Source: RMDB library OK2TRN, as collected in RNAgym. Chemical mapping of a 177-nucleotide RNA with DMS and 2A3.
[RMDB]
RNA sequence: GGGAACGACUCGAGUAGAGUCGAAAAGGAUCGCUGUCGAGACCUGCUGGCGAAAGGCAAUCCAGAUGGACUACGAAACCGAUACCGACACCGAGCUUGUCACCGAGACCCUGGUUGAAGAGGUGUCCAUCAGCGCAUUAUUCGUAAUGCGCUGAUGAAAAGAAACAACAACAACAAC
Reactivity to DMS in 0.01 (KOAc 150mM, MgCl2 10mM, bicine 150mM(pH8.5), 24C), signal-to-noise 4, nucleotides 027 to 126: g010g020a090u010c040g010c100u000g010u010c030g020a150g000a080c060c020u000g000c060u000g010g010c120g000a070a110a120g000g010c100a080a100u010c040c020a070g000a130u000g010g000a110c060u000a120c070g010a030a040a040c090c020g030a100u010a080c060c040g020a080c050a040c020c020g000a110g000c070u000u000g020u010c070a070c050c020g010a150g000a080c050c030c030u000g010g020u000u010g010a080a070g000a150g000g000u010g010u000c020
Reactivity to 2A3 in 0.01 (KOAc 150mM, MgCl2 10mM, bicine 150mM(pH8.5), 24C), signal-to-noise 3, nucleotides 027 to 126: g030g020a030u020c010g010c060u060g030u090c030g030a020g010a100c020c040u050g050c030u030g100g000c050g120a160a110a080g100g000c070a080a040u000c020c000a030g010a090u140g030g000a050c050u140a110c120g070a060a020a020c020c010g000a020u090a150c030c020g010a010c020a010c010c010g000a030g040c020u120u130g050u120c030a020c060c010g020a020g060a160c010c020c060u110g000g050u080u150g050a040a020g050a020g030g000u050g040u050c010
Background
The DMS profile rests on 3,376 reads. For 2A3 the reverse transcriptase was SuperScript II with manganese. Conditions: 150 mM KOAc, 10 mM MgCl2 and 150 mM bicine (pH 8.5), 24 C. The 2A3 profile rests on 2,717 reads.